An RNA of 177 nucleotides, treated with 2A3 and DMS and read out base by base. Source: RMDB library TTRDEL, as collected in RNAgym.
RNA sequence: GGGAACGACUCGAGUAGAGUCGAAAAGAUAUGGAUCUCGAAGAACUAGUUGCCGAUGAAAUCGGAAACGAUGGAGGCGACUAGGGAGAGAUCCUAAGUCAAACUGUCAGUGUUCGCACUGACAGAAGAUACGCAACGUGUUCGCACGUUGCGUAUCAAAAGAAACAACAACAACAAC
Reactivity to 2A3 in 0.01 (KOAc 150mM, MgCl2 10mM, bicine 150mM(pH8.5), 24C), signal-to-noise 1, nucleotides 027 to 126: g010a020u040a070u210g000g000a000u010c020u010c030g300a300a100g010a050a030c020u020a000g000u010u020g000c000c060g090a300u010g010a030a040a010u000c020g040g000a120a050a050c000g000a000u000g030g010a050g000g000c010g000a000c000u000a000g000g030g040a040g020a010g000a010u000c030c000u000a030a000g040u080c010a040a040a060c010u000g000u000c000a010g000u020g080u080u300c300g030c070a000c000u020g000a000c000a010g000a000a000
Reactivity to DMS in 0.01 (KOAc 150mM, MgCl2 10mM, bicine 150mM(pH8.5), 24C), signal-to-noise 1, nucleotides 027 to 126: g000a040u020a300u000g000g000a000u010c000u000c000g040a220a070g040a160a220c000u010a000g000u000u000g010c000c020g050a140u010g010a080a180a040u000c040g000g000a130a040a180c000g010a050u010g000g000a060g050g030c000g010a010c000u020a000g000g020g000a210g000a020g000a000u000c000c000u000a000a010g000u000c020a190a160a100c000u000g010u000c000a000g000u000g040u000u000c260g010c000a000c020u000g000a030c010a030g000a090a050